[RMDB]
RNA sequence: GGGAACGACUCGAGUAGAGUCGAAAAGGGGUCCACGGUAAAGUAUGGAAUCGCAACAGCGCUACUGAAGCCUCCACGGUAGCGACAUGCGACCAUACUUUAAAUGUGGACGGAGGCACCCAAAACACCAAGGUAAACUUCGGUUUACCUUGGUGAACGACGAAUAUUUCUUCGGAAAUAUUCGUCGAAAAGAAACAACAACAACAAC
Reactivity to 2A3 in 0.01 (KOAc 150mM, MgCl2 10mM, bicine 150mM(pH8.5), 24C), signal-to-noise 1, nucleotides 027 to 156: g120g000g070g030u020c020c000a010c030g050g030u110a100a070a030g010u010a000u010g040g020a210a200u020c000g040c030a080a100c040a230g070c000g000c010u010a000c000u030g040a150a060g020c000c050u000c010c000a030c030g000g010u000a000g010c010g050a020c030a060u150g000c010g000a010c000c000a000u000a010c000u000u000u000a000a000a000u100g000u010g000g000a000c000g000g000a020g000g000c000a050c010c000c000a100a170a000a020c010a000c000c000a000a000g000g000u010a000a000a000c000u050u120c300g030g000u030u030u000a000c000c000u000u010g010g000u000g000a010a000